[RMDB]
RNA sequence: GGGAACGACUCGAGUAGAGUCGAAAAGAUAUGGACCUUACUUCUUUUGACGGAUGUCGGAAACGACAUACCGAUAAGAAGGAGGUCCUAAGUCAAAGCGAGAUGGUAGUUCGCUACCAUCUCGCAACCUUUUUGCCAACUUCGGUUGGCAAAAAGGAAAAGAAACAACAACAACAAC
Reactivity to 2A3 in 0.01 (KOAc 150mM, MgCl2 10mM, bicine 150mM(pH8.5), 24C), signal-to-noise 1, nucleotides 027 to 126: g020a000u060a000u190g000g010a010c000c010u030u250a300c020u010u280c030u100u290u160u260g100a050c020g010g010a010u010g000u000c030g020g000a010a030a080c030g020a010c010a010u050a300c020c020g040a040u050a280a000g020a020a030g000g000a000g000g020u000c000c000u000a020a010g000u030c010a020a120a000g030c000g000a040g000a020u010g000g000u010a000g030u070u150c280g020c090u010a010c000c000a000u000c050u000c000g000c000a000a000

The data come from the RNA Mapping Database (RMDB), library TTRDEL. Chemical mapping of a 177-nucleotide RNA with 2A3. For 2A3 the reverse transcriptase was SuperScript II with manganese.